[RMDB]
RNA sequence: GGGAACGACUCGAGUAGAGUCGAAAAGUCAGCUUGUUCGCAAGCUGACAAACUGGACACACCCACACCCAGGCGAAGCCGUGUCAUAAUGGGUGUGGGUAAAAAGGACACUGUUCGCAGUGUCCAACACGCUUUAUAAGUUCGCUUAUAAAGCGUGAAAAGAAACAACAACAACAAC
Reactivity to DMS in 0.01 (KOAc 150mM, MgCl2 10mM, bicine 150mM(pH8.5), 24C), signal-to-noise 7, nucleotides 027 to 126: g010u000c000a000g000c010u000u000g010u000u010c220g020c010a020a010g010c010u010g010a010c010a010a040a090c070u010g020g010a110c150a090c150a070c000c000c000a010c010a010c000c000c000a040g010g010c230g000a050a090g010c130c140g000u010g020u000c070a060u010a250a130u000g000g000g010u000g010u000g000g000g010u000a000a000a030a080a020g010g000a010c000a010c010u000g000u000u010c210g010c000a010g010u010g000u000c000c000a040a050
Reactivity to 2A3 in 0.01 (KOAc 150mM, MgCl2 10mM, bicine 150mM(pH8.5), 24C), signal-to-noise 6, nucleotides 027 to 126: g000u000c000a000g020c000u020u010g020u070u140c190g040c140a000a010g000c000u010g000a000c000a000a000a000c010u050g160g040a020c030a000c000a000c120c010c000a010c000a000c000c000c010a020g020g000c030g070a090a030g150c120c120g140u140g070u100c060a080u200a300a070u070g000g010g000u000g000u000g010g000g000u010a000a000a000a000a000g000g000a000c000a000c010u020g030u090u070c160g000c110a000g000u000g000u000c000c000a010a010
The data come from the RNA Mapping Database (RMDB), library M2PK50. This 177-nucleotide RNA was probed chemically with DMS and 2A3.